[RMDB]
RNA sequence: GGGAACGACUCGAGUAGAGUCGAAAAAACGCUUCACAACCUGAAAGAAGCGCCUGUUAUCAGGACGGUUAAUCCAUUUACCGGUGCAGACCUCUGCAAACACCGGGUUGCAGAACAUCGCGACGGACAAGGGAGGAUACCUUCGGGUAUCCUCCAACGUAAAAGUAAGCUUCGGCUUACUUUUACGAAAAGAAACAACAACAACAAC
Reactivity to DMS in 0.01 (KOAc 150mM, MgCl2 10mM, bicine 150mM(pH8.5), 24C), signal-to-noise 1, nucleotides 027 to 156: a050a030c020g010c000u000u000c000a120c160a020a300c000c000u000g040a070a150a240g000a030a000g030c020g000c010c040u060g050u020u020a070u000c060a030g010g010a080c050g000g010u010u000a180a160u010c070c040a180u010u020u000a060c030c010g000g030u000g030c070a040g000a090c130c070u000c020u020g010c000a120a060a030c020a270c090c110g030g020g000u000u000g000c010a060g000a090a150c050a040u000c020g010c030g030a120c020g010g010a080c060a060a120g000g020g020a030g000g020a010u010a010c010c000u000u000c240g050g000g000u000a010u000c020c000u010c000c040a000a030
Reactivity to 2A3 in 0.01 (KOAc 150mM, MgCl2 10mM, bicine 150mM(pH8.5), 24C), signal-to-noise 3, nucleotides 027 to 156: a000a000c030g020c010u020u010c020a050c060a110a040c000c000u000g000a000a010a010g000a000a010g020c000g010c000c000u180g030u190u170a150u300c020a000g010g000a010c020g000g000u040u070a040a040u000c040c000a050u090u070u080a080c020c000g010g030u040g050c020a010g010a150c020c030u060c020u050g010c030a020a050a010c130a040c090c100g120g130g000u000u020g000c010a020g020a080a020c010a050u100c050g000c010g040a020c030g050g030a080c080a100a140g110g000g000a000g000g000a000u000a000c000c000u060u100c170g120g000g000u000a000u000c000c000u010c000c000a000a000
Chemical mapping of a 207-nucleotide RNA with DMS and 2A3. It was measured as part of the RMDB library M2RFPK. The 2A3 profile rests on 1,544 reads. For DMS the reverse transcriptase was MarathonRT.